[RMDB]
RNA sequence: GGGAACGACUCGAGUAGAGUCGAAAAUCGUGUGGUGAGCGGGGGCUGCAUGGCUACAAACGGAAAUGCUGGGAAGGAUUUUUUCCCUGCCUGUCUGUCGCGCUCUCUGCACCCUCCGAUCUCUCUCUAAAUCUGAUAUGUUCGCAUAUCAGAUUUAAAAAGAAACAACAACAACAAC
Reactivity to DMS in 0.01 (KOAc 150mM, MgCl2 10mM, bicine 150mM(pH8.5), 24C), signal-to-noise 9, nucleotides 027 to 126: u020c070g020u020g020u010g000g010u000g000a020g010c010g000g000g010g010g020c130u000g010c020a020u020g000g000c010u010a120c210a100a120a030c020g010g000a030a060a030u000g000c010u000g000g010g010a030a020g010g010a060u000u020u020u020u000u000c000c000c000u000g000c010c080u010g000u000c010u000g000u000c090g010c300g000c010u000c020u010c030u000g000c000a020c210c010c000u000c010c000g000a070u020c030u000c010u000c020u000c100
Reactivity to 2A3 in 0.01 (KOAc 150mM, MgCl2 10mM, bicine 150mM(pH8.5), 24C), signal-to-noise 9, nucleotides 027 to 126: u110c030g010u090g030u070g070g040u050g020a020g010c010g000g010g000g020g000c020u020g000c020a060u120g040g000c010u080a040c090a050a100a010c030g020g030a060a080a050u120g010c010u060g020g010g010a010a020g090g110a210u130u110u030u000u070u030c000c000c000u000g010c000c010u040g020u020c010u010g020u030c020g010c010g010c080u010c010u010c010u030g000c000a030c010c000c000u000c010c000g040a100u030c010u000c000u000c000u000c020

This 177-nucleotide RNA was probed chemically with DMS and 2A3. 2A3 adducts were read by reverse transcription with SuperScript II with manganese. The reactions ran in a buffer of 150 mM KOAc, 10 mM MgCl2 and 150 mM bicine (pH 8.5), at 24 C. It was measured as part of the RMDB libraries RFM100 and RFMREP. For DMS the reverse transcriptase was MarathonRT. High DMS reactivity at an A or C suggests that its Watson-Crick edge is free.